[RMDB]
RNA sequence: GGGAACGACUCGAGUAGAGUCGAAAAGAUAUGGAAUCGAGCGGGAGCUGACCCAUCGGAAACGAUGGGCAGCAUCGAUCGCUUCGAUUCCUAAGUCAAAACCAUCUUGGGUUCGCCCAAGAUGGAAGAAGAGGUGUAACUUCGGUUACACCUCUUCAAAAGAAACAACAACAACAAC
Reactivity to 2A3 in 0.01 (KOAc 150mM, MgCl2 10mM, bicine 150mM(pH8.5), 24C), signal-to-noise 2, nucleotides 027 to 126: g010a010u020a000u040g020g000a000a000u010c010g000a000g020c000g040g040g090a110g030c010u060g300a300c000c010c020a000u010c000g010g060a080a020a000c000g010a000u010g000g050g000c010a000g000c000a010u100c020g030a100u020c010g030c000u230u130c000g010a000u010u020c000c000u000a040a030g000u020c010a000a000a120a160c010c000a020u030c000u010u010g000g010g030u090u070c300g140c000c010c010a000a000g000a000u010g000g000a020a040
Reactivity to DMS in 0.01 (KOAc 150mM, MgCl2 10mM, bicine 150mM(pH8.5), 24C), signal-to-noise 2, nucleotides 027 to 126: g000a010u010a210u000g000g000a030a000u000c000g020a020g040c020g010g010g000a110g060c000u010g000a240c000c000c000a000u000c000g010g020a100a040a110c000g020a000u000g000g010g010c000a000g010c010a150u000c240g000a090u000c020g000c000u010u000c010g000a000u000u000c000c000u000a020a070g000u000c010a090a130a210a240c020c000a020u000c000u000u010g000g000g030u010u000c290g020c020c000c000a000a000g010a010u000g000g000a050a040
Annotation
Structure probing data (2A3 and DMS) for a 177-nucleotide construct. DMS adducts were read by reverse transcription with MarathonRT. 2A3 adducts were read by reverse transcription with SuperScript II with manganese. The reactions ran in a buffer of 150 mM KOAc, 10 mM MgCl2 and 150 mM bicine (pH 8.5), at 24 C.